[RMDB]
RNA sequence: GGGAACGACUCGAGUAGAGUCGAAAAUGAACGGCAAUCGCCCGGAUCUUAUCGUUGAUUUCUGGCGCAAUGGCUGCCGGAACUACCACUUUCGCGCCAUCUUCGUCAAUGUACUUGGUGUCGUAGGCGUAACCAGCAAAUUCGUUUGCUGGUUACGAAAAGAAACAACAACAACAAC
Reactivity to 2A3 in 0.01 (KOAc 150mM, MgCl2 10mM, bicine 150mM(pH8.5), 24C), signal-to-noise 4, nucleotides 027 to 126: u070g010a070a010c000g030g000c020a030a070u070c020g030c000c020c010g000g030a040u000c050u060u160a130u270c070g260u080u180g040a100u020u100u040c020u030g000g000c040g000c060a070a160u190g090g000c050u060g000c030c000g010g000a010a030c020u070a080c050c000a050c040u100u130u110c070g000c000g000c010c000a040u000c020u080u020c030g060u010c040a090a300u220g020u080a060c030u010u040g020g010u030g030u040c020g010u040a090g080g000
Reactivity to DMS in 0.01 (KOAc 150mM, MgCl2 10mM, bicine 150mM(pH8.5), 24C), signal-to-noise 6, nucleotides 027 to 126: u010g010a180a130c060g000g000c030a050a080u010c060g010c030c000c050g000g000a030u000c040u000u000a070u010c250g000u010u000g000a060u000u000u000c030u000g020g010c090g030c120a170a080u000g010g010c070u000g020c000c010g000g010a060a060c110u000a150c080c050a100c170u000u010u010c070g010c020g000c010c010a040u010c050u010u000c060g020u000c120a080a080u000g000u010a040c050u000u000g000g010u010g010u000c030g020u000a080g000g000
An RNA of 177 nucleotides, treated with 2A3 and DMS and read out base by base. The DMS profile rests on 6,497 reads.